[RMDB]
RNA sequence: GGGAACGACUCGAGUAGAGUCGAAAAUAGCAAUUACGCAGUAGGUAUUUAUGCUUACCAGCAUAAAUAGAAGGGAAAUUAUACGAUGUUCAGCUUUAUAAGAGUUGACUCAUAUUUAAGGGACCCACAUAUGAUUUAUGUUCGCAUAAAUCAUAUGAAAAGAAACAACAACAACAAC
Reactivity to 2A3 in 0.01 (KOAc 150mM, MgCl2 10mM, bicine 150mM(pH8.5), 24C), signal-to-noise 5, nucleotides 027 to 126: u110a020g000c020a050a140u230u070a130c120g000c050a040g080u160a030g120g080u030a010u030u010u000a010u010g010c000u050u110a120c030c040a020g010c010a000u010a010a030a000u040a020g080a100a070g020g000g010a030a090a010u100u040a050u030a040c030g010a020u040g050u090u030c000a000g020c010u070u120u060a300u090a190a090g050a010g040u010u010g000a010c000u010c020a040u090a060u070u120u100a040a040g050g000g040a020c000c000c010a020
Reactivity to DMS in 0.01 (KOAc 150mM, MgCl2 10mM, bicine 150mM(pH8.5), 24C), signal-to-noise 7, nucleotides 027 to 126: u010a110g020c030a120a080u000u000a110c180g020c040a130g000u000a090g010g000u000a010u000u000u000a010u000g010c000u000u010a180c300c220a130g010c000a010u000a000a000a010u000a030g010a120a150g000g000g010a070a140a100u000u000a030u000a030c070g000a020u000g010u010u000c000a010g010c010u000u000u010a140u010a110a180g000a010g010u000u000g010a020c010u000c010a030u000a030u000u000u000a090a100g000g010g010a170c020c020c050a170

The record gives the reactivity of an RNA of 177 nucleotides to 2A3 and DMS. The reactions ran in a buffer of 150 mM KOAc, 10 mM MgCl2 and 150 mM bicine (pH 8.5), at 24 C. Reactivities are rounded to 0.1 and cut off at 0 and 3.